[RMDB]
RNA sequence: GGGAACGACUCGAGUAGAGUCGAAAAUGAUCCUCCCUCUCCUUGUCGGUGAACCCGCUCUUGUGAGGCCUCUUCAUAGGUCCGGAGUCGACCUCCAUCUGAUCUGUUCGGGCCCUCUUCGCCGGGGCUCUUUGCAUCAGUUCGCUGAUGCAAAGAGAAAAGAAACAACAACAACAAC
Reactivity to DMS in 0.01 (KOAc 150mM, MgCl2 10mM, bicine 150mM(pH8.5), 24C), signal-to-noise 1, nucleotides 027 to 126: u000g000a120u000c010c010u000c000c040c010u000c000u000c030c050u000u010g020u000c020g020g030u010g010a090a160c080c030c030g010c060u000c050u010u010g020u020g010a100g020g000c050c040u000c070u000u010c100a120u010a070g010g030u000c060c090g000g000a070g010u000c070g000a100c110c000u010c030c010a080u010c070u010g000a090u000c070u000g030u000u000c140g010g010g010c030c020c000u000c070u000u000c060g000c110c070g040g010g000g000
Chemical mapping of a 177-nucleotide RNA with DMS. Source: RMDB library 15KREP, as collected in RNAgym. Conditions: 150 mM KOAc, 10 mM MgCl2 and 150 mM bicine (pH 8.5), 24 C. DMS adducts were read by reverse transcription with MarathonRT.